Background: Chemical mapping of a 177-nucleotide RNA with DMS and 2A3. Source: RMDB library OK2TST, as collected in RNAgym. For DMS, 10,289 sequencing reads were counted. Reactivities are given for positions 27 through 126. Conditions: 150 mM KOAc, 10 mM MgCl2 and 150 mM bicine (pH 8.5), 24 C. For 2A3, 10,301 sequencing reads were counted.
RNA sequence: GGGAACGACUCGAGUAGAGUCGAAAAUGACGUCUUUGACGUUCUUGGCGCCGUACCCCGUGGUCUCAUCGGUGAGAACCUGCUGCACACCGGCCUGCGCCUUAAUGACGUCCAGCUUGGUGGUGACGAUCAUAAGUAGCUUCGGCUACUUAUGAUCAAAAGAAACAACAACAACAAC
Reactivity to DMS in 0.01 (KOAc 150mM, MgCl2 10mM, bicine 150mM(pH8.5), 24C), signal-to-noise 6, nucleotides 027 to 126: u010g010a030c020g010u000c000u010u000u010g010a080c040g010u000u000c090u000u000g020g010c040g020c030c060g010u010a130c080c010c020c050g020u010g010g010u000c020u000c030a060u000c140g010g010u000g010a080g010a070a090c040c030u000g020c090u010g010c070a090c050a070c060c040g000g010c040c030u000g010c040g010c010c030u000u000a070a090u000g010a050c060g010u010c050c100a090g010c070u000u010g030g010u000g000g010u000g010a140c200
Reactivity to 2A3 in 0.01 (KOAc 150mM, MgCl2 10mM, bicine 150mM(pH8.5), 24C), signal-to-noise 6, nucleotides 027 to 126: u110g010a000c010g010u000c030u070u100u270g040a030c020g070u070u000c040u030u060g040g010c020g030c010c020g030u110a110c000c020c010c020g070u050g030g010u010c020u010c030a110u110c100g200g050u120g020a040g030a040a070c000c000u040g040c040u060g010c040a010c000a020c050c020g020g000c000c010u030g000c030g010c010c000u020u080a110a090u120g020a010c010g020u000c000c020a020g010c010u110u260g040g000u060g010g060u050g050a060c080